The record gives the reactivity of an RNA of 177 nucleotides to 2A3 and DMS. The reactions ran in a buffer of 150 mM KOAc, 10 mM MgCl2 and 150 mM bicine (pH 8.5), at 24 C.
RNA sequence: GGGAACGACUCGAGUAGAGUCGAAAACAUACCUCAUGCAGCUCUGUUACGAACUGUUAGAAUUCUGUUCCACCCCUACAUCGAUCAUGGCAACUGUCGCGCUGUAGCUUGCGCUGUCUUGAAUACACCGUAUGCGGGAAUUCGUUCCCGCAUACGGAAAAGAAACAACAACAACAAC
Reactivity to 2A3 in 0.01 (KOAc 150mM, MgCl2 10mM, bicine 150mM(pH8.5), 24C), signal-to-noise 1, nucleotides 027 to 126: c050a020u120a000c000c000u060c030a030u060g000c050a020g030c020u000c000u090g190u260u130a030c100g030a060a030c040u050g040u230u060a040g040a080a180u140u020c070u130g080u060u000c000c000a040c010c000c000c000u030a020c030a060u170c010g050a060u010c000a050u070g010g060c020a030a030c050u130g020u070c000g020c010g000c010u050g060u180a030g030c040u010u090g000c050g000c020u020g030u010c070u020u080g030a060a060u050a040c010a020
Reactivity to DMS in 0.01 (KOAc 150mM, MgCl2 10mM, bicine 150mM(pH8.5), 24C), signal-to-noise 2, nucleotides 027 to 126: c120a030u000a090c110c040u000c090a150u010g000c000a050g000c030u000c030u000g010u000u030a120c150g010a080a040c020u000g000u020u000a190g000a080a090u000u000c100u010g040u000u000c020c010a130c040c000c020c010u030a050c140a040u010c080g000a080u000c040a070u000g010g020c050a060a090c050u000g030u010c130g000c040g030c030u000g030u000a090g020c060u000u020g010c100g020c020u000g010u000c040u000u000g010a090a070u000a080c230a100
DMS adducts were read by reverse transcription with MarathonRT. For DMS, 1,341 sequencing reads were counted. It was measured as part of the RMDB library OK2TRN.